Structure probing data (DMS and 2A3) for a 177-nucleotide construct. The 2A3 profile rests on 2,892 reads.
[RMDB]
RNA sequence: GGGAACGACUCGAGUAGAGUCGAAAAGAUAUGGAACCUGGACAUGAUCCCGGAUCGGAAACGAUCCGGAAGAUCAACAGCCUGGGUUCCUAAGUCAAACGACUGAAAAGUUCGCUUUUCAGUCGAAGAACUUUAUCAACUUCGGUUGAUAAAGUUCAAAAGAAACAACAACAACAAC
Reactivity to DMS in 0.01 (KOAc 150mM, MgCl2 10mM, bicine 150mM(pH8.5), 24C), signal-to-noise 2, nucleotides 027 to 126: g010a060u000a300u010g000g020a000a010c010c000u000g020g040a010c010a150u000g000a030u000c020c010c000g020g010a010u010c000g000g020a090a050a180c010g010a000u010c000c000g030g020a020a010g010a010u000c020a060a080c140a070g000c020c000u010g020g000g010u010u000c000c000u000a010a080g010u000c010a130a160a280c010g010a030c000u000g000a010a000a010a030g040u000u020c200g020c010u000u000u010u000c000a000g000u000c000g010a060a070
Reactivity to 2A3 in 0.01 (KOAc 150mM, MgCl2 10mM, bicine 150mM(pH8.5), 24C), signal-to-noise 1, nucleotides 027 to 126: g000a010u050a030u120g000g000a000a000c010c010u020g030g000a010c020a100u090g010a010u000c000c010c010g010g000a000u020c000g030g030a050a050a040c020g010a010u000c000c010g000g000a010a010g000a000u020c000a000a120c020a020g000c020c010u020g000g000g010u000u000c000c000u000a020a000g000u000c030a160a040a050c010g000a000c010u000g000a020a000a000a000g030u070u160c250g070c160u010u000u000u000c000a010g000u000c010g000a010a010